[RMDB]
RNA sequence: GGGAACGACUCGAGUAGAGUCGAAAACUGCUGGACUCCAGUGGCCGCCUGAUAGGCAUCAGCACUGCCACGUUCUCCAGGAAAGGAACGGGGAGGGGCAGUGGAGUGAACUUUGCACUGCCAGCGGGUUUACAUGCUGAUUCGUCAGCAUGUAAACAAAAGAAACAACAACAACAAC
Reactivity to 2A3 in 0.01 (KOAc 150mM, MgCl2 10mM, bicine 150mM(pH8.5), 24C), signal-to-noise 6, nucleotides 027 to 126: c020u030g000c000u010g000g010a030c030u020c090c020a060g030u020g080g050c040c030g040c020c010u110g120a190u170a150g060g000c020a030u040c020a010g100c020a000c040u030g010c010c010a120c060g090u060u010c010u000c010c020a040g050g110a100a160a060g110g020a070a050c060g000g000g000g030a030g030g010g010g000c010a020g020u020g020g000a040g050u040g030a050a020c030u070u090u200g010c040a030c040u040g000c010c000a000g020c040g020g010
Reactivity to DMS in 0.01 (KOAc 150mM, MgCl2 10mM, bicine 150mM(pH8.5), 24C), signal-to-noise 8, nucleotides 027 to 126: c050u000g000c010u000g010g010a130c040u000c170c020a060g030u000g010g020c050c100g020c080c000u000g000a100u010a080g020g020c040a100u000c050a110g000c100a100c190u000g000c000c000a130c020g000u000u000c010u010c020c030a300g010g000a090a130a100g010g000a070a080c110g010g010g000g010a080g020g000g000g000c010a040g000u000g000g000a050g000u000g010a070a100c110u000u000u000g010c030a050c030u000g010c000c010a030g000c020g000g000